[RMDB]
RNA sequence: GGGAACGACUCGAGUAGAGUCGAAAAUUCGGAUGCCCAGGUCGGACCGCGAGGAGGUGGAGAUGCCAUGCCGACCCGAAGAGGAAAGAAGGACGCGAGACACGAACCUGUGAGUGGAAACCCGCUUCAUAGUACCAAUGUUCGCAUUGGUACUAUGAAAAGAAACAACAACAACAAC
Reactivity to DMS in 0.01 (KOAc 150mM, MgCl2 10mM, bicine 150mM(pH8.5), 24C), signal-to-noise 2, nucleotides 027 to 126: u010u000c050g000g010a200u000g010c000c020c000a140g000g050u010c040g000g000a090c050c050g020c060g020a170g020g020a110g020g020u010g000g000a110g010a130u010g010c060c050a070u000g010c040c010g010a110c070c010c020g030a050a100g000a090g000g000a040a040a060g020a100a150g030g000a120c080g020c050g000a050g000a100c040a100c040g020a040a100c030c030u000g030u000g010a090g030u010g010g000a050a090a180c010c020c030g000c140u000u010
Reactivity to 2A3 in 0.01 (KOAc 150mM, MgCl2 10mM, bicine 150mM(pH8.5), 24C), signal-to-noise 1, nucleotides 027 to 126: u060u010c050g050g040a050u130g090c010c000c000a000g050g000u030c020g000g000a060c050c000g010c070g010a070g040g060a030g000g080u080g010g010a140g010a030u180g060c000c000a010u040g080c000c000g050a050c000c010c010g050a070a010g040a080g040g010a120a020a040g090a020a040g050g010a020c010g040c010g010a070g020a050c030a020c050g020a060a080c010c020u030g030u100g060a070g000u090g010g000a040a050a020c000c000c020g020c030u040u010

An RNA of 177 nucleotides, treated with DMS and 2A3 and read out base by base. The DMS profile rests on 1,243 reads. The 2A3 profile rests on 1,910 reads.